[RMDB]
RNA sequence: GGGAACGACUCGAGUAGAGUCGAAAAUGACGACCUACGUAGGACAAACCGAAGCGAAAGCUGUCGUCCAGUACGUUUCCGGUGAUCAAGGACGUAAGCCGGAGGAGCAAAGGUGAUUAGAGACCCCCACCCUCCAUGUGUUCGCACAUGGAGGGUGAAAAGAAACAACAACAACAAC
Reactivity to 2A3 in 0.01 (KOAc 150mM, MgCl2 10mM, bicine 150mM(pH8.5), 24C), signal-to-noise 3, nucleotides 027 to 126: u220g060a000c040g050a080c000c000u030a020c030g060u040a050g110g060a040c090a090a100a000c050c020g090a020a010g000c040g050a110a010a000g000c080u050g000u080c030g000u010c010c000a060g080u080a010c030g000u040u020u000c010c000g000g020u070g000a090u210c150a120a090g060g060a040c190g030u080a030a030g020c000c000g000g020a020g000g030a070g010c110a110a030a030g030g010u020g000a070u040u130a020g020a020g010a080c000c000c000c020
Reactivity to DMS in 0.01 (KOAc 150mM, MgCl2 10mM, bicine 150mM(pH8.5), 24C), signal-to-noise 4, nucleotides 027 to 126: u020g000a160c100g000a040c040c000u010a060c130g000u000a100g000g000a030c070a070a120a190c120c100g000a060a030g020c010g000a090a090a130g010c010u010g000u000c120g000u000c020c000a050g030u020a010c060g020u020u000u000c010c030g000g020u040g020a130u020c080a160a110g030g000a070c130g010u000a090a220g000c050c020g010g000a090g000g000a100g000c090a060a090a090g000g000u000g000a060u000u030a060g010a180g000a110c030c010c010c040